[RMDB]
RNA sequence: GGGAACGACUCGAGUAGAGUCGAAAAAAGGACGGUCCAAGGGCGAGUCGACCUCCCUCGGCACGAGGACGUGCCUGGUUUUGAGUGGGGGAGGAUGUUAUGGACAAAUUCCGUAACCAUAUGAGGCCUAAUUGAAGAGCGUACCAAGCUGUGUUUCACUUCCAUGUAAGUUCGCUUACAUGGAAGUAAAAGAAACAACAACAACAAC
Reactivity to DMS in 0.01 (KOAc 150mM, MgCl2 10mM, bicine 150mM(pH8.5), 24C), signal-to-noise 2, nucleotides 027 to 156: a110a090g000g000a070c070g030g020u000c020c000a070a230g020g060g000c030g050a080g040u000c060g010a190c020c020u000c000c010c020u000c030g020g060c010a020c010g080a210g050g000a300c000g040u000g010c000c030u000g090g000u000u000u000u000g060a150g040u040g030g040g020g000g020a090g040g010a010u000g010u000u000a060u020g030g030a080c090a170a060a130u000u000c010c000g020u000a040a020c020c090a060u000a220u000g010a130g020g010c010c000u010a070a210u000u010g020a160a080g010a100g000c000g060u000a020c030c040a090a300g010c000u010g010u000g020u010u000u000c040
Reactivity to 2A3 in 0.01 (KOAc 150mM, MgCl2 10mM, bicine 150mM(pH8.5), 24C), signal-to-noise 5, nucleotides 027 to 156: a000a020g040g010a010c030g030g110u010c020c020a030a040g030g000g000c030g050a080g100u050c030g030a090c000c010u000c010c000c010u040c030g000g020c010a010c020g040a140g220g150a070c070g020u010g000c000c000u060g100g030u030u050u130u200g140a130g040u220g010g000g000g000g000a000g000g010a010u080g010u000u030a020u020g010g000a030c120a080a120a070u220u030c000c010g000u000a000a000c020c030a040u050a080u270g030a030g080g000c000c000u100a150a180u060u110g080a160a090g000a010g060c020g020u040a220c020c010a040a020g040c090u060g020u000g000u090u000u000c010